[RMDB]
RNA sequence: GGGAACGACUCGAGUAGAGUCGAAAAAGGUCAAGAAAAGCUCCAAACUGUUAAAUUGGCAAGCACAGUUGAUAAAUCAGAAAGUGAAAUUGCAAUUGAUUGUCUCUUUCCUUACAUAGGCUUUGAACUACUUACACCGGUUCGCCGGUGUAAGUAGAAAAGAAACAACAACAACAAC
Reactivity to 2A3 in 0.01 (KOAc 150mM, MgCl2 10mM, bicine 150mM(pH8.5), 24C), signal-to-noise 1, nucleotides 027 to 126: a000g040g020u090c020a070a050g080a050a050a010a000g060c030u020c040c070a020a050a060c020u010g040u110u130a020a120a060u120u060g020g000c010a020a000g180c030a020c010a050g030u010u050g000a070u070a160a080a010u030c020a010g120a090a100a000g140u060g070a090a060a060u040u060g000c000a030a020u020u110g020a020u100u000g050u010c020u000c000u060u040u020c000c020u000u030a070c040a100u120a010g020g040c000u070u010u140g000a040a040
Reactivity to DMS in 0.01 (KOAc 150mM, MgCl2 10mM, bicine 150mM(pH8.5), 24C), signal-to-noise 2, nucleotides 027 to 126: a090g000g000u000c080a120a140g000a130a120a120a120g000c070u010c050c070a070a090a080c050u020g010u000u010a030a050a110u010u000g010g000c050a040a060g020c150a050c040a030g010u010u000g000a090u020a030a070a090u010c050a060g000a080a060a090g020u000g000a030a060a080u000u000g000c030a040a080u010u010g000a080u000u000g000u000c010u000c030u010u000u000c010c030u000u010a060c170a130u010a090g010g020c020u000u000u000g000a070a140